[RMDB]
This 207-nucleotide RNA was probed chemically with 2A3 and DMS. The RNA was probed in 150 mM KOAc, 10 mM MgCl2 and 150 mM bicine (pH 8.5) at 24 C. For DMS the reverse transcriptase was MarathonRT. The DMS profile rests on 2,400 reads. It was measured as part of the RMDB library OK3TST.
RNA sequence: GGGAACGACUCGAGUAGAGUCGAAAAACUUCCAGGUCAGCCCUUACCUGUCAGAGCCCAUCACUGCCCCUCAUACUCUGAAACUAGUCUCACCUGAGUCGGCAGCUGGCUUUUAAUUCCAAUUCCAAAGAUUUUCUGUAUCUUUCUUAUAGACCUAUACCGCAUUUAAUUUCGAUUAAAUGCGGUAAAAAGAAACAACAACAACAAC
Reactivity to 2A3 in 0.01 (KOAc 150mM, MgCl2 10mM, bicine 150mM(pH8.5), 24C), signal-to-noise 2, nucleotides 027 to 156: a010c020u100u000c010c010a010g030g010u040c050a050g050c020c000c010u040u020a040c000c020u050g070u060c020a020g030a030g050c020c010c000a010u120c060a020c070u030g020c000c000c000c020u000c030a050u050a120c050u070c030u080g000a030a040a000c050u040a030g080u010c000u010c060a040c000c050u010g000a000g020u030c020g020g020c020a000g010c030u040g020g010c010u100u030u080u150a060a080u040u040c020c010a040a090u100u040c000c020a020a090a100g030a110u130u030u030u040c030u110g100u060a070u040c020u020u110u010c010u050u120a120u100a080g080a020c170c010u230a010
Reactivity to DMS in 0.01 (KOAc 150mM, MgCl2 10mM, bicine 150mM(pH8.5), 24C), signal-to-noise 1, nucleotides 027 to 156: a050c080u000u000c000c000a110g030g050u000c050a100g030c030c000c030u000u000a070c010c020u050g020u010c090a100g010a060g030c020c030c060a170u000c090a040c000u000g000c020c010c030c010u000c030a080u000a100c070u000c030u010g040a110a080a100c030u010a100g000u000c060u010c010a070c090c060u020g020a120g020u000c020g000g020c050a040g050c010u000g010g000c030u000u000u000u000a070a190u000u000c020c030a030a160u000u010c020c030a050a070a120g000a060u000u010u000u000c020u000g000u000a080u000c000u000u000u000c000u000u010a060u020a090g030a090c040c030u000a300